[RMDB]
RNA sequence: GGGAACGACUCGAGUAGAGUCGAAAAAGAUCCACGCUACGGCGUGGAUCACACGUUCAUCCCUAUUGGGACGGAAGUAGGCAUAGUGCCGCAGGAACGCAUUAGUCAUGCGCUACGGCGCAUGACACACAUCAGAGUCACUUCGGUGACUCUGAAAGUCUAACUCCUAGUUCGCUAGGAGUUAGACAAAAGAAACAACAACAACAAC
Reactivity to 2A3 in 0.01 (KOAc 150mM, MgCl2 10mM, bicine 150mM(pH8.5), 24C), signal-to-noise 2, nucleotides 027 to 156: a010g010a000u020c000c010a000c000g020c000u040a020c210g140g000c000g000u000g000g000a000u000c000a000c000a000c000g020u050u030c040a080u080c000c000c010u110a300u200u270g000g010g020a010c030g010g050a070a070g100u130a130g020g010c050a100u170a200g140u140g080c000c020g010c040a040g000g170a110a030c010g020c090a080u040u240a030g000u000c000a000u020g000c000g000c010u050a100c270g050g000c000g000c010a000u000g010a000c000a000c000a020c000a040u040c000a000g000a000g000u000c000a000c000u040u010c080g130g000u000g000a000c000u000c000u000g000a000a000a000